[RMDB]
RNA sequence: GGGAACGACUCGAGUAGAGUCGAAAAUGCCGUUCUUCUGGUCCGAGAAGGACAUGGACCACGGCGACAAGCUGGAACUGCUGAUCGGCGCGAUCCUCGGCUGCUCCAAGAUUCGUUUCGCCGUCGAGGUCCAAAGUUAUUUCGAUAACUUUGGACCAAAAGAAACAACAACAACAAC
Reactivity to 2A3 in 0.01 (KOAc 150mM, MgCl2 10mM, bicine 150mM(pH8.5), 24C), signal-to-noise 4, nucleotides 027 to 126: u070g050c010c010g030u010u010c010u040u010c010u040g050g060u040c030c020g040a020g050a100a040g210g040a030c050a090u110g010g000a000c000c000a020c020g000g020c010g000a020c030a040a020g010c020u020g020g020a020a040c010u050g020c010u030g010a120u180c090g040g010c100g030c090g140a110u060c010c010u010c010g000g020c000u020g010c010u000c010c000a040a040g040a120u130u120c050g030u040u040u070c030g000c020c000g050u050c040g100a040
Reactivity to DMS in 0.01 (KOAc 150mM, MgCl2 10mM, bicine 150mM(pH8.5), 24C), signal-to-noise 4, nucleotides 027 to 126: u010g020c030c020g000u000u000c010u000u000c040u000g020g010u000c050c100g000a060g000a040a070g010g010a050c100a060u000g020g000a030c050c010a090c030g000g010c010g010a040c110a050a070g020c030u010g000g010a040a020c030u000g010c010u000g010a050u010c150g010g010c090g000c220g010a120u010c020c090u000c030g010g010c010u000g020c030u000c030c010a030a090g000a140u000u000c120g020u000u000u000c020g020c030c000g010u000c120g000a130
Source: RMDB library OK2TST, as collected in RNAgym. This 177-nucleotide RNA was probed chemically with 2A3 and DMS. DMS adducts were read by reverse transcription with MarathonRT. DMS (dimethyl sulfate) methylates the pairing face of unpaired adenines and cytosines. For 2A3 the reverse transcriptase was SuperScript II with manganese. As a SHAPE reagent, 2A3 marks flexible, mostly unpaired nucleotides at the ribose 2'-OH.